This 177-nucleotide RNA was probed chemically with DMS.
The RNA was probed in 150 mM KOAc, 10 mM MgCl2 and 150 mM bicine (pH 8.5) at 24 C.
Values cover nucleotides 27 to 126.
The DMS profile rests on 795 reads.

[RMDB]
RNA sequence: GGGAACGACUCGAGUAGAGUCGAAAAAGGCAGGAUCAGCGCCCGAGAGGGGAUAAAUGGUAAAGAGCAUUGGAACGUCGGAGAGAUUCUCCCAAGAAGGAAAAAAGAGAAAGCAAGAAUCGGACGAGAUUAUAAGACUCUUCGGAGUCUUAUAAUCAAAAGAAACAACAACAACAAC
Reactivity to DMS in 0.01 (KOAc 150mM, MgCl2 10mM, bicine 150mM(pH8.5), 24C), signal-to-noise 1, nucleotides 027 to 126: a080g000g000c000a020g000g000a010u000c050a130g030c100g010c060c010c060g030a120g020a090g000g010g010g030a060u000a020a100a090u000g000g000u010a050a090a090g010a130g000c040a050u020u010g010g000a090a080c150g040u010c050g000g010a080g000a090g000a180u000u000c050u000c020c030c070a080a090g010a040a050g000g000a020a020a050a050a060a130g020a050g000a000a000a070g000c100a070a080g000a060a090u010c130g000g000a070c080g010a190